[RMDB]
RNA sequence: GGGAACGACUCGAGUAGAGUCGAAAAACGCGUGGUAAACGCCAUUCGGUGACCACCAUCGUCAUACUGCGCGGCGCAUCGCCCAUCAGCGCGGCGAAUACCUGCGAGGUUUCCAGCGUGACGGCACGCCGGGGAGACGGUUCGCCGUCUCCCCGGCAAAAGAAACAACAACAACAAC
Reactivity to DMS in 0.01 (KOAc 150mM, MgCl2 10mM, bicine 150mM(pH8.5), 24C), signal-to-noise 1, nucleotides 027 to 126: a030c050g000c030g020u000g000g060u000a070a220a270c040g010c080c050a230u000u060c040g030g000u010g000a190c090c110a220c080c040a020u000c000g000u000c080a120u000a070c070u030g000c080g000c010g000g000c020g000c120a190u060c090g050c000c060c010a140u030c060a140g000c120g000c100g000g050c060g080a110a080u010a090c150c000u000g010c030g020a200g080g000u000u000u000c040c050a180g010c110g010u000g000a050c090g010g030c120a100c120
Reactivity to 2A3 in 0.01 (KOAc 150mM, MgCl2 10mM, bicine 150mM(pH8.5), 24C), signal-to-noise 1, nucleotides 027 to 126: a000c060g040c000g000u000g000g100u140a120a120a010c000g030c040c010a080u260u270c050g050g020u020g050a030c060c030a010c070c020a120u070c040g000u050c020a000u090a090c020u040g040c000g000c020g040g000c000g000c050a090u080c050g060c050c000c000a110u170c070a020g060c000g000c000g110g030c040g000a010a030u080a040c010c000u000g100c180g080a110g100g000u020u020u000c020c020a020g000c000g050u020g040a050c020g010g060c050a000c060